[RMDB]
RNA sequence: GGGAACGACUCGAGUAGAGUCGAAAAGAUAUGGACUCCCGCUAAGCAACAGCUACUGGGUCGGAAACGACCUGUAGACAUGCUUAUGGAGUCCUAAGUCAAAGAUCAUGCCUUCGGGCAUGAUCAACCAUGCUUUAGUCUUCGGACUAAAGCAUGGAAAAGAAACAACAACAACAAC
Reactivity to 2A3 in 0.01 (KOAc 150mM, MgCl2 10mM, bicine 150mM(pH8.5), 24C), signal-to-noise 2, nucleotides 027 to 126: g010a030u100a040u140g000g000a000c000u020c020c010c000g010c050u030a000a000g000c020a040a170c080a200g050c010u020a010c100u300g090g010g020u020c010g020g060a120a080a050c030g000a000c000c000u010g000u000a000g000a060c020a070u140g000c000u040u040a050u130g000g000a010g000u020c010c000u000a020a000g020u020c030a000a060a120g010a000u010c000a010u000g000c010c010u050u180c300g090g000g000c010a000u000g000a000u000c010a010a010
Reactivity to DMS in 0.01 (KOAc 150mM, MgCl2 10mM, bicine 150mM(pH8.5), 24C), signal-to-noise 2, nucleotides 027 to 126: g000a020u000a300u010g000g020a020c000u000c000c050c140g050c060u000a020a000g010c000a010a030c270a220g000c000u020a000c020u060g000g020g040u000c000g000g020a130a100a190c000g000a020c000c010u000g010u000a000g000a060c130a200u000g010c000u000u010a000u020g010g000a030g000u010c010c000u000a010a070g000u010c050a140a210a150g000a000u000c000a000u010g020c000c000u000u000c250g010g000g030c000a000u000g000a000u000c000a040a080

Chemical mapping of a 177-nucleotide RNA with 2A3 and DMS. The 2A3 profile rests on 4,795 reads. It was measured as part of the RMDB library TTRDES. 2A3 adducts were read by reverse transcription with SuperScript II with manganese. The reactions ran in a buffer of 150 mM KOAc, 10 mM MgCl2 and 150 mM bicine (pH 8.5), at 24 C.